[RMDB]
Description:
Chemical mapping of a 207-nucleotide RNA with DMS and 2A3.
RNA sequence: GGGAACGACUCGAGUAGAGUCGAAAAGAGACCGUUUCUUAUUUUGUGCCGAAGCUAUUUAUAAAUCACAGGCUGAAACAGGUGAAAUCAAAGGGCAUUAUUUGAAUGCUACUGCGGGUACAUGCGAAGAAAUGAUCAAAAGAGCUGUAUUUGCCAGACCACUGAAACAAUUCGUUGUUUCAGUGGUAAAAGAAACAACAACAACAAC
Reactivity to DMS in 0.01 (KOAc 150mM, MgCl2 10mM, bicine 150mM(pH8.5), 24C), signal-to-noise 1, nucleotides 027 to 156: g030a230g020a070c020c010g000u000u000u000c000u000u000a080u010u000u010u010g010u000g040c070c040g000a130a060g040c010u000a100u000u010u000a130u010a060a070a130u000c030a030c030a120g000g010c040u000g000a140a130a040c020a060g000g030u010g000a060a080a070u040c040a060a060a070g040g010g030c000a030u000u000a190u030u030u000g000a050a050u000g040c020u000a040c030u000g000c100g050g030g020u010a000c070a020u000g030c120g020a040a070g010a020a050a020u010g000a070u000c010a060a060a040a160g000a160g010c010u000g010u010a130u020u010u010g030c040c030a190g000
Reactivity to 2A3 in 0.01 (KOAc 150mM, MgCl2 10mM, bicine 150mM(pH8.5), 24C), signal-to-noise 3, nucleotides 027 to 156: g070a000g020a020c030c010g000u000u010u030c060u060u100a250u120u200u080u070g020u020g000c040c020g060a060a000g030c040u020a050u110u270u000a180u130a060a120a000u070c030a010c010a060g040g010c030u070g030a050a030a010c040a030g020g040u030g050a040a080a010u160c090a070a090a020g010g020g020c000a010u020u080a090u110u100u180g190a020a000u030g000c000u040a120c040u040g010c040g000g000g000u010a000c010a040u140g040c070g040a040a030g060a020a130a090u130g060a060u150c070a010a030a100a090g070a040g000c050u020g040u080a080u040u080u070g040c010c030a050g050
The RNA was probed in 150 mM KOAc, 10 mM MgCl2 and 150 mM bicine (pH 8.5) at 24 C. Values cover nucleotides 27 to 156. For 2A3 the reverse transcriptase was SuperScript II with manganese. The data come from the RNA Mapping Database (RMDB), library OK3TST.